[RMDB]
RNA sequence: GGGAACGACUCGAGUAGAGUCGAAAACAUGCACUGAGACCUGCUGCACACCAGGGCCUGUGCCAAGCACCAAAGAGCCAGACAGGAACAUACUGAGGUCCUGGCCUGGAGGCCUUCACAGCCAUGGCCUGAAGGCCCUUUUCGAAGGGCCUUCAGGAAAAGAAACAACAACAACAAC
Reactivity to 2A3 in 0.01 (KOAc 150mM, MgCl2 10mM, bicine 150mM(pH8.5), 24C), signal-to-noise 4, nucleotides 027 to 126: c020a040u110g010c040a040c060u070g020a030g090a250c000c000u020g000c040u080g070c050a040c000a030c090c060a030g040g010g000c010c020u040g000u010g010c060c010a080a040g040c020a020c030c040a110a100a020g110a030g020c000c010a000g020a050c000a030g010g050a080a020c020a090u230a070c090u170g070a050g060g120u010c010c000u010g050g000c020c000u000g000g030a040g020g010c010c020u070u060c040a060c030a010g040c030c020a090u050g050g010
Reactivity to DMS in 0.01 (KOAc 150mM, MgCl2 10mM, bicine 150mM(pH8.5), 24C), signal-to-noise 2, nucleotides 027 to 126: c080a030u000g020c100a070c070u000g000a170g000a120c040c000u000g000c060u000g000c070a020c100a140c050c130a030g000g000g030c010c020u000g000u000g000c080c100a020a060g030c000a260c060c040a070a100a070g020a100g020c000c030a020g010a120c020a040g010g000a020a030c050a110u050a130c140u040g010a140g010g010u000c020c000u010g000g010c090c000u010g000g050a110g000g030c140c020u000u000c100a040c070a040g000c100c010a060u000g000g030